The record gives the reactivity of an RNA of 177 nucleotides to DMS and 2A3.

[RMDB]
RNA sequence: GGGAACGACUCGAGUAGAGUCGAAAAGAUAUGGAUGGUCAAUAAGACAGUCGUGAAGGCGAUGAAACUCUUCGGAAACGAAGAGUGGAGCCUUGAUCACGACAAUGACGUUGACCAUCCUAAGUCACGUUAACAGUCAGUUCGCUGACUGUUAACGAAAAGAAACAACAACAACAAC
Reactivity to DMS in 0.01 (KOAc 150mM, MgCl2 10mM, bicine 150mM(pH8.5), 24C), signal-to-noise 2, nucleotides 027 to 126: g010a040u000a300u000g000g000a020u000g000g000u000c000a010a010u040a150a230g010a220c160a040g030u000c000g040u010g030a010a030g000g010c020g010a150u000g040a180a140a050c000u000c000u000u000c000g000g000a080a060a090c000g010a000a020g010a000g040u000g000g000a080g020c020c000u000u000g040a120u000c000a000c010g010a030c000a160a110u000g000a180c300g000u000u000g000a020c040c000a000u000c000c000u040a000a130g000u000c030a240
Reactivity to 2A3 in 0.01 (KOAc 150mM, MgCl2 10mM, bicine 150mM(pH8.5), 24C), signal-to-noise 2, nucleotides 027 to 126: g050a020u090a010u230g000g000a020u010g010g000u000c000a000a030u020a130a050g260a180c140a130g060u020c020g020u000g040a020a000g030g000c020g200a230u050g010a040a000a000c000u030c010u000u010c000g030g030a040a050a080c010g030a000a000g000a000g020u000g000g010a020g010c000c000u000u160g070a170u130c020a010c000g000a010c020a000a060u060g000a020c090g000u020u010g010a000c020c000a000u000c000c000u010a010a010g020u000c010a000
The 2A3 profile rests on 3,516 reads.